[RMDB]
Structure probing data (DMS and 2A3) for a 177-nucleotide construct. It was measured as part of the RMDB library M2PK90. High DMS reactivity at an A or C suggests that its Watson-Crick edge is free.
RNA sequence: GGGAACGACUCGAGUAGAGUCGAAAAAAAAAAUAGAUCGUUCUAUUAACGAUCUCGCGCGGGUCGUCGGUGGUCGGCGAGCCCACGGACGAACUUUCUCGCGCGUAAGUUAAUAAAUCGCCAAAAACAGUCUUAAGAUAUUCGUAUCUUAAGACUGAAAAGAAACAACAACAACAAC
Reactivity to DMS in 0.01 (KOAc 150mM, MgCl2 10mM, bicine 150mM(pH8.5), 24C), signal-to-noise 4, nucleotides 027 to 126: a000a020a070a070a070a060u000a000g000a000u000c000g010u000u000c260u020a130u010u010a040a000c010g010a020u000c010u000c020g010c000g030c010g010g010g010u000c000g010u000c010g010g040u000g000g000u000c040g000g000c010g010a020g000c250c010c000a010c000g010g000a010c010g010a060a130c190u010u010u000c030u010c000g010c000g010c000g010u000a010a030g000u000u010a030a060u000a010a030a030u000c010g010c010c010a070a060a080a070a140
Reactivity to 2A3 in 0.01 (KOAc 150mM, MgCl2 10mM, bicine 150mM(pH8.5), 24C), signal-to-noise 4, nucleotides 027 to 126: a000a000a000a000a000a010u110a010g010a010u000c020g010u040u020c150u210a300u300u180a060a000c000g010a000u000c010u000c010g000c000g000c000g020g000g040u030c000g000u000c060g150g000u010g000g020u020c050g000g030c010g000a010g030c020c000c000a000c000g050g010a000c000g000a030a030c010u130u270u170c030u040c020g010c000g000c000g000u000a000a020g010u020u060a060a030u070a110a090a030u020c010g010c000c020a020a050a010a010a030

The RNA was probed in 150 mM KOAc, 10 mM MgCl2 and 150 mM bicine (pH 8.5) at 24 C. For DMS the reverse transcriptase was MarathonRT.